[RMDB]
RNA sequence: GGGAACGACUCGAGUAGAGUCGAAAAAAGCAAGCGCCACACAGCAUAGCUCGUCACCUCUUUCCAACUUGGGCCUCAUACUUUGCACUCUUCCAAUCAAUCAACUACGGAGAGGAGAAAGACGAGAGUGAUCGAGAAGCUUCGGCUUCUCGAUCACAAAAGAAACAACAACAACAAC
Reactivity to 2A3 in 0.01 (KOAc 150mM, MgCl2 10mM, bicine 150mM(pH8.5), 24C), signal-to-noise 2, nucleotides 027 to 126: a000a050g130c020a010a000g060c090g040c060c000a020c000a000c000a000g000c050a120u060a070g030c040u020c030g060u020c020a110c000c000u000c000u010u070u110c010c010a100a170c190u120u140g020g060g000c000c000u060c010a040u070a060c000u060u050u030g000c080a070c000u010c000u120u010c010c010a080a040u050c000a110a050u070c000a050a020c020u200a080c090g050g020a000g020a010g060g000a060g000a020a060a000g030a030c020g050a020g020a040